[RMDB]
RNA sequence: GGGAACGACUCGAGUAGAGUCGAAAAUACACAUGAAAAUGGACAGAAAGAGAGAUAAAAAAAGAAUUAGAAUUCAAACAUUUUCGUGUUUUCAUCUAAUUGGUAAAUGUACUUGUAUAGACUUUUUAUCUUCCAAUAGCGCAUGUAAUCAGAGAUCGAUGUGUCCUACAUUCGUGUAGGACACAUCAAAAGAAACAACAACAACAAC
Reactivity to 2A3 in 0.01 (KOAc 150mM, MgCl2 10mM, bicine 150mM(pH8.5), 24C), signal-to-noise 3, nucleotides 027 to 156: u160a000c040a000c000a040u050g010a020a040a050a080u050g040g040a010c070a060g120a040a200a000g080a010g000a010g060a050u210a050a070a050a030a050a060a040g060a020a040u070u100a080g020a080a110u080u050c070a050a020a050c000a000u090u090u180u160c060g000u010g030u020u090u070u070c010a030u050c020u090a070a030u060u020g070g000u110a060a080a060u050g040u120a100c040u080u080g060u060a100u060a090g100a030c000u060u090u010u030u100a020u050c000u070u040c020c000a080a060u020a070g080c080g000c050a030u040g050u180a080a030u120c020a010g110a020g030a140u190c080
Reactivity to DMS in 0.01 (KOAc 150mM, MgCl2 10mM, bicine 150mM(pH8.5), 24C), signal-to-noise 1, nucleotides 027 to 156: u020a140c080a100c080a040u010g040a050a020a140a130u010g020g000a140c070a140g000a110a070a160g000a100g000a120g000a070u000a000a020a140a080a030a110a240g000a140a030u010u010a070g000a090a160u000u010c030a080a030a120c000a020u000u020u020u000c130g050u000g020u000u000u040u000c050a040u010c070u020a000a010u010u000g010g010u030a090a030a070u000g010u010a040c010u000u010g020u020a110u000a110g000a090c020u000u000u040u020u000a030u020c000u000u000c070c040a100a080u000a080g020c040g000c020a040u010g000u000a080a090u020c020a050g000a050g000a110u000c130
Overview
Chemical mapping of a 207-nucleotide RNA with 2A3 and DMS. The reactions ran in a buffer of 150 mM KOAc, 10 mM MgCl2 and 150 mM bicine (pH 8.5), at 24 C. For 2A3 the reverse transcriptase was SuperScript II with manganese. For DMS, 1,265 sequencing reads were counted. For DMS the reverse transcriptase was MarathonRT. It was measured as part of the RMDB library OK3TST.